[RMDB]
RNA sequence: GGGAACGACUCGAGUAGAGUCGAAAAAAAGGCUUAUCAAGAUAGGUGGAGGGACUGGCCCGAUGAAACCCGGCAGCCAGAAAUGGUGCCAAUUCCUGCAGCGGAAACGUUGAAAGAUGAGCCGAAACACUAUUUUAAUCUUCGGAUUAAAAUAGUGAAAAGAAACAACAACAACAAC
Reactivity to 2A3 in 0.01 (KOAc 150mM, MgCl2 10mM, bicine 150mM(pH8.5), 24C), signal-to-noise 2, nucleotides 027 to 126: a000a000a000g010g000c010u010u000a010u010c010a000a070g020a220u070a100g040g010u020g020g050a050g020g010g010a010c050u050g060g000c010c010c010g090a180u050g010a030a040a020c010c010c000g010g020c040a060g180c000c000a000g010a010a000a000u020g000g000u010g000c010c000a000a010u050u020c000c010u050g060c020a000g010c010g010g010a030a030a000c000g000u000u040g030a080a030a010g010a000u000g000a000g000c000c010g010a010a010a000
Reactivity to DMS in 0.01 (KOAc 150mM, MgCl2 10mM, bicine 150mM(pH8.5), 24C), signal-to-noise 2, nucleotides 027 to 126: a030a070a090g000g020c000u000u000a010u010c000a120a100g030a180u000a080g020g010u010g010g010a090g010g010g010a210c110u000g000g020c000c010c020g010a080u020g010a130a100a130c090c040c030g030g000c230a040g030c010c010a030g000a100a090a090u000g010g030u010g000c000c010a030a060u000u000c000c010u000g000c000a000g020c010g010g000a080a060a070c040g000u010u000g010a090a090a050g000a040u000g000a000g030c000c000g000a090a050a170
Source information
Conditions: 150 mM KOAc, 10 mM MgCl2 and 150 mM bicine (pH 8.5), 24 C. The record gives the reactivity of an RNA of 177 nucleotides to 2A3 and DMS. Values cover nucleotides 27 to 126. In probing experiments dimethyl sulfate is read out at A N1 and C N3, which are open when not base-paired. It was measured as part of the RMDB library 15KREP.